[RMDB]
RNA sequence: GGGAACGACUCGAGUAGAGUCGAAAAGAUAUGGAUCCACGGGAAGCGGUGGGCCGAGUCGGAAACGAUAUCCCACCGAACUACUUCCCGUGGAUCCUAAGUCAAAAGAGCGCGUUCGCGCGCUCAACAGAAUUGUGAAGUUCGCUUCACAAUUCUGAAAAGAAACAACAACAACAAC
Reactivity to DMS in 0.01 (KOAc 150mM, MgCl2 10mM, bicine 150mM(pH8.5), 24C), signal-to-noise 2, nucleotides 027 to 126: g000a070u000a300u010g000g010a020u000c000c010a020c000g000g000g010a010a010g010c010g000g020u000g000g010g000c300c150g000a090g010u000c000g010g010a090a070a200c010g020a000u010a070u000c020c010c000a000c010c010g000a020a030c080u010a300c010u000u000c000c000c010g010u010g000g000a000u000c000c000u000a010a060g000u000c040a080a050a150a070g010a010g000c010g050c000g020u000u010c220g050c000g030c000g040c000u010c000a080a110